The record gives the reactivity of an RNA of 207 nucleotides to 2A3. It was measured as part of the RMDB library OK3TST.
[RMDB]
RNA sequence: GGGAACGACUCGAGUAGAGUCGAAAAAAGAGCAGUCAUUCUUUAGUGACUCAUUUCUUCAGCCCUGCUUGUGACUCCAGUAUAGUCUCUGAAAACUCACUCAAGGACUUUCCAGGGUCCUAUCUCUACAUAUUUACCUUAAAUACCAAUUACAUUACAUGCAUCAGGGAUUCGUCCCUGAUGCAUGAAAAGAAACAACAACAACAAC
Reactivity to 2A3 in 0.01 (KOAc 150mM, MgCl2 10mM, bicine 150mM(pH8.5), 24C), signal-to-noise 2, nucleotides 027 to 156: a000a000g110a010g000c060a010g020u020c010a020u010u080c100u180u290u290a030g000u020g000a000c010u030c030a060u060u100u030c030u040u030c030a030g000c000c000c010u030g060c070u040u060g040u040g080a010c030u060c030c000a000g010u070a040u060a050g030u000c020u000c000u040g070a050a060a100a040c030u060c060a040c000u080c080a120a070g010g000a010c000u020u040u010c070c050a030g000g100g000u000c010c000u030a050u050c060u060c020u050a100c060a080u170a120u160u200u150a140c020c000u100u150a120a080a080u160a090c080c040a060a100u240u140a060c050a070u150u000a050